[RMDB]
An RNA of 177 nucleotides, treated with DMS and read out base by base.

RNA sequence: GGGAACGACUCGAGUAGAGUCGAAAACUGUGGAUAGCGGAGAAAUUCCAAUCGAACUCGGAGAUAGCUGGUUCUCCUCGAAAUAGCUUUAGGGCUAGCGUCUGGAAAUUGAGUAAUGGAGGUAGAGAACAGUGGACCGAUUCGUCGGUCCACUGUUAAAAGAAACAACAACAACAAC
Reactivity to DMS in 0.01 (KOAc 150mM, MgCl2 10mM, bicine 150mM(pH8.5), 24C), signal-to-noise 1, nucleotides 027 to 126: c050u010g020u000g030g010a060u010a060g000c070g000g010a040g000a060a020a090u000u010c020c010a050a150u000c080g010a060a070c110u010c110g000g000a050g030a070u000a080g010c050u010g000g020u010u010c020u000c050c040u000c080g000a050a100a140u000a050g010c040u000u010u000a120g000g000g010c030u000a020g010c100g020u000c040u000g010g010a090a040a050u010u000g010a070g010u020a100a090u000g000g000a050g020g000u000a090g000a130g030
Notes
For DMS the reverse transcriptase was MarathonRT. The DMS profile rests on 1,217 reads. The RNA was probed in 150 mM KOAc, 10 mM MgCl2 and 150 mM bicine (pH 8.5) at 24 C.